The record gives the reactivity of an RNA of 207 nucleotides to 2A3 and DMS. For DMS, 5,445 sequencing reads were counted. DMS adducts were read by reverse transcription with MarathonRT. DMS (dimethyl sulfate) methylates the pairing face of unpaired adenines and cytosines. It was measured as part of the RMDB library M2RFPK.
RNA sequence: GGGAACGACUCGAGUAGAGUCGAAAAGUAUGGAUGCCACCGUGACGGCUGAAUCACACAAGUGCCAACGAUAACGAGGCGCUCGCUAUUGCUGCGUAACUGACGGCCUGACGGUCUGACGUUACAAAAAACGAAAAGUGGUUCGCCACUUUUCGAACUAAAGCCUAUACUUCGGUAUAGGCUUUAGAAAAGAAACAACAACAACAAC
Reactivity to 2A3 in 0.01 (KOAc 150mM, MgCl2 10mM, bicine 150mM(pH8.5), 24C), signal-to-noise 3, nucleotides 027 to 156: g080u090a060u160g050g020a070u070g020c040c030a030c030c010g040u020g040a100c110g040g020c020u010g060a030a080u120c030a030c020a020c030a150a050g000u010g000c010c010a080a040c070g030a080u080a090a030c090g010a050g090g030c050g020c030u020c030g000c040u060a040u150u280g010c040u090g030c070g030u020a040a010c000u030g020a010c000g000g010c010c000u130g080a010c070g000g020u040c020u010g020a030c010g000u040u030a020c030a010a070a000a000a000a020c030g010a000a000a000a000g010u000g050g000u030u030c110g000c060c000a020c000u000u000u000u000c000g000a030a000
Reactivity to DMS in 0.01 (KOAc 150mM, MgCl2 10mM, bicine 150mM(pH8.5), 24C), signal-to-noise 3, nucleotides 027 to 156: g040u000a080u000g010g010a040u010g030c010c040a080c020c090g020u010g010a160c130g010g020c030u010g020a150a120u000c050a110c050a070c080a090a030g050u000g020c030c000a070a160c060g030a150u000a070a090c060g020a160g010g050c050g030c030u010c020g050c040u010a040u010u020g010c010u000g020c040g030u000a020a050c020u000g000a300c300g010g010c000c020u010g010a080c200g040g010u010c000u020g010a300c200g020u000u020a090c030a000a020a050a070a060a140c020g000a010a000a010a010g030u000g000g010u000u010c300g000c010c010a000c000u000u000u000u010c000g000a020a110